[RMDB]
RNA sequence: GGGAACGACUCGAGUAGAGUCGAAAAGGAGCAGCCAUGAUGACUAUUCUUGGUUCAGGCAACGUCGGUAUCGGCAAAACAAAUCCAGGAGCAUUACUUGAUGUGAAUGGAGCUCUUGCGGCAACAUCAGUUGCAUGUACAUCAGUUACGGCCCAGGCGCCAUAUGUGCCUUCGGGCACAUAUGGCGAAAAGAAACAACAACAACAAC
Reactivity to 2A3 in 0.01 (KOAc 150mM, MgCl2 10mM, bicine 150mM(pH8.5), 24C), signal-to-noise 1, nucleotides 027 to 156: g130g010a030g060c010a030g070c080c030a090u030g070a080u030g030a130c040u020a040u250u070c020u020u080g070g010u180u030c080a080g080g000c000a060a060c030g100u060c010g000g000u120a100u190c050g000g020c030a080a190a050a030c070a000a030a030u090c040c010a000g080g080a040g000c000a030u010u080a140c080u100u230g020a000u040g070u030g010a090a050u020g000g030a060g000c050u080c000u040u140g010c050g020g000c030a150a070c000a190u300c060a030g030u010u030g000c050a020u140g040u020a000c070a060u080c080a040g080u060u170a000c090g030g010c000c000c030a020g040g040
Structure probing data (2A3) for a 207-nucleotide construct.